RNA sequence: GGGAACGACUCGAGUAGAGUCGAAAAGUUUAUGCGAAGGCACUUCGCAAUGUGUGCUCAAACAUUGCUUAUUCAAACACGCUUCACAAUGUGCGACAAAGAAACAUUGUUAUAAGAGCUAAUGUUUACCACGCCUAAAGGUUCGCCUUUAGGCGAACUUCUGAGGAUCCUUCGGGAUCCUCAGAAGAAAAGAAACAACAACAACAAC
Reactivity to 2A3 in 0.01 (KOAc 150mM, MgCl2 10mM, bicine 150mM(pH8.5), 24C), signal-to-noise 2, nucleotides 027 to 156: g040u080u270u170a130u170g050c030g090a080a100g210g010c050a060c040u160u100c040g070c120a050a060u020g000u000g020u010g000c070u070c130a020a000a030c000a010u010u010g000c000u060u180a190u150u090c070a030a100a000c050a000c080g000c000u020u040c030a000c000a060a000u010g020u030g010c000g050a080c090a110a150a030g090a020a130a000c000a000u000u000g140u050u040a130u060a130a070g030a000g030c030u090a130a090u100g010u010u000u000a140c000c100a070c010g010c000c000u060a040a050a000g020g040u060u060c200g100c020c000u000u000u000a000g060g000c010g010a000a000